[RMDB]
RNA sequence: GGGAACGACUCGAGUAGAGUCGAAAAACGCUGAUCUGCGCGUGUCAAACGUGAUGGAGGUCAAGACGACGUCAACACAGGGAGCGCCCCAGCUGGAGGAGACGGACGUGGCUGGCCGCGCUGCAGCGGCUACGCAAAGCUUCGGCUUUGCGUAGCCAAAAGAAACAACAACAACAAC
Reactivity to 2A3 in 0.01 (KOAc 150mM, MgCl2 10mM, bicine 150mM(pH8.5), 24C), signal-to-noise 2, nucleotides 027 to 126: a000c020g000c020u050g040a110u130c050u140g020c000g000c010g070u120g050u080c070a110a120a060c070g000u060g060a060u090g130g100a090g000g090u060c050a030a050g080a020c090g010a010c000g040u010c010a030a060c050a000c020a080g000g050g040a140g010c050g090c030c040c000c000a000g060c020u070g020g060a080g070g020a000g020a000c020g030g000a010c040g060u030g020g060c040u020g000g000c000c000g000c010g000c030u030g040c000a040g020c030
Reactivity to DMS in 0.01 (KOAc 150mM, MgCl2 10mM, bicine 150mM(pH8.5), 24C), signal-to-noise 1, nucleotides 027 to 126: a090c040g010c040u000g010a040u020c020u000g010c040g030c040g020u000g020u010c130a040a170a120c150g040u000g000a030u010g000g000a070g020g000u000c070a130a150g000a120c030g010a100c040g000u000c060a070a140c110a040c100a080g020g020g000a160g020c070g000c100c050c010c040a080g000c060u000g000g000a120g000g000a160g000a040c080g000g000a110c050g000u000g010g000c070u010g010g010c010c000g030c020g000c020u000g040c110a050g030c090